[RMDB]
RNA sequence: GGGAACGACUCGAGUAGAGUCGAAAACGAGACCACCGCCACCAGCGUCACCGAGUUCGACGGCACUUUCGAGACCGUCAUCACGUGGCGGUUCGAUGGUCUGUGGGAUGUCGCGGUUGCCCACAUGCAAUGUGAGCGCGUUCGCGCGCUCACAUUGAAAAGAAACAACAACAACAAC
Reactivity to DMS in 0.01 (KOAc 150mM, MgCl2 10mM, bicine 150mM(pH8.5), 24C), signal-to-noise 2, nucleotides 027 to 126: c070g000a130g010a060c000c040a060c000c300g030c040c030a040c020c050a100g010c010g010u000c060a050c120c080g000a110g040u000u000c120g010a030c010g010g000c060a130c040u010u010u020c130g010a050g010a190c010c000g010u000c000a020u000c050a100c150g000u000g000g020c010g010g020u000u000c080g010a020u000g010g020u000c050u010g020u010g000g010g010a040u000g000u000c070g000c040g010g000u000u010g000c020c000c000a070c190a130u000g010
Reactivity to 2A3 in 0.01 (KOAc 150mM, MgCl2 10mM, bicine 150mM(pH8.5), 24C), signal-to-noise 1, nucleotides 027 to 126: c060g020a020g030a040c000c020a000c040c000g000c000c040a010c010c030a020g110c040g060u000c010a030c090c080g040a070g100u100u120c110g000a040c000g000g050c090a080c300u140u170u140c170g110a120g000a170c000c000g000u000c000a000u030c010a010c080g020u010g000g000c000g000g000u020u040c010g000a030u020g000g060u050c100u060g000u010g000g030g030a110u040g060u090c000g000c010g230g030u060u120g080c000c080c000a040c010a000u160g030